[RMDB]
RNA sequence: GGGAACGACUCGAGUAGAGUCGAAAACUGAGACGCUUCGGCGUCUCAGAAAUGGAACACAGGCGAAGGAAGCAAGAGCUAUCAUGCCAAUGUCCACGUGGAAAACUCAUACGUUCGCGUAUGAGAACCCUGGACUAGUGUUCGCACUAGUCCAGGGAAAAGAAACAACAACAACAAC
Reactivity to DMS in 0.01 (KOAc 150mM, MgCl2 10mM, bicine 150mM(pH8.5), 24C), signal-to-noise 1, nucleotides 027 to 126: c000u000g000a000g000a020c010g010c000u000u010c300g050g000c000g030u000c000u000c000a010g000a060a060a060u010g000g010a080a020c070a000c180a170g000g010c040g020a130a180g000g000a040a030g020c020a090a130g000a080g020c030u000a080u010c000a100u000g000c000c000a090a070u010g020u000c020c000a080c300g000u020g000g000a090a080a120a040c000u000c000a010u000a010c000g000u000u030c230g020c000g010u000a010u000g000a000g020a040a040
Reactivity to 2A3 in 0.01 (KOAc 150mM, MgCl2 10mM, bicine 150mM(pH8.5), 24C), signal-to-noise 1, nucleotides 027 to 126: c000u010g010a010g000a010c010g020c020u010u050c220g150g010c010g000u000c010u000c000a000g000a010a000a000u060g000g030a070a000c040a020c040a130g070g000c030g040a170a120g100g030a030a010g050c050a140a140g060a060g180c030u060a100u300c000a040u170g000c000c000a030a000u060g000u000c020c000a010c060g000u180g080g030a060a030a020a050c000u000c020a000u000a000c000g020u010u010c250g000c000g070u030a020u020g010a000g000a000a020